[RMDB]
RNA sequence: GGGAACGACUCGAGUAGAGUCGAAAACCUGCGUGAUCCGUUGUAAAUGGCGCUGUGACCCAUUACUACACGCAAAUGAUGUAGAGAUUGAUCACGUAGCGUCGCGGUUGGCGGGUCCGGCCGCGGGUCAAGCUUCGCGCUUCGGUGCGAGGCUUGAAAAAGAAACAACAACAACAAC
Reactivity to DMS in 0.01 (KOAc 150mM, MgCl2 10mM, bicine 150mM(pH8.5), 24C), signal-to-noise 9, nucleotides 027 to 126: c010c000u000g000c010g020u000g000a000u000c000c080g000u000u000g000u020a070a080a050u010g000g010c120g020c080u040g010u010g000a130c060c000c020a050u010u020a300c030u000a010c000a010c050g010c260a110a110a090u040g000a120u000g000u000a010g000a300g000a050u000u000g000a020u000c000a000c010g010u010a020g010c090g000u010c000g020c010g000g000u000u000g000g010c070g000g000g000u040c000c040g010g000c030c000g010c000g000g000g000
Reactivity to 2A3 in 0.01 (KOAc 150mM, MgCl2 10mM, bicine 150mM(pH8.5), 24C), signal-to-noise 8, nucleotides 027 to 126: c000c000u000g000c000g010u000g000a000u000c000c010g000u010u020g110u110a040a050a050u120g020g000c020g010c070u090g090u090g080a070c010c000c000a010u020u080a070c000u000a000c010a000c020g060c030a010a060a150u260g040a050u020g000u010a000g010a000g000a070u010u050g000a000u000c000a000c000g010u010a010g020c020g070u030c000g000c000g020g000u010u010g010g020c060g050g030g000u020c000c000g000g010c000c000g000c000g000g000g000
Chemical mapping of a 177-nucleotide RNA with DMS and 2A3. DMS adducts were read by reverse transcription with MarathonRT. The reactions ran in a buffer of 150 mM KOAc, 10 mM MgCl2 and 150 mM bicine (pH 8.5), at 24 C. For 2A3 the reverse transcriptase was SuperScript II with manganese. For 2A3, 24,084 sequencing reads were counted. The data come from the RNA Mapping Database (RMDB), library OK1LIB.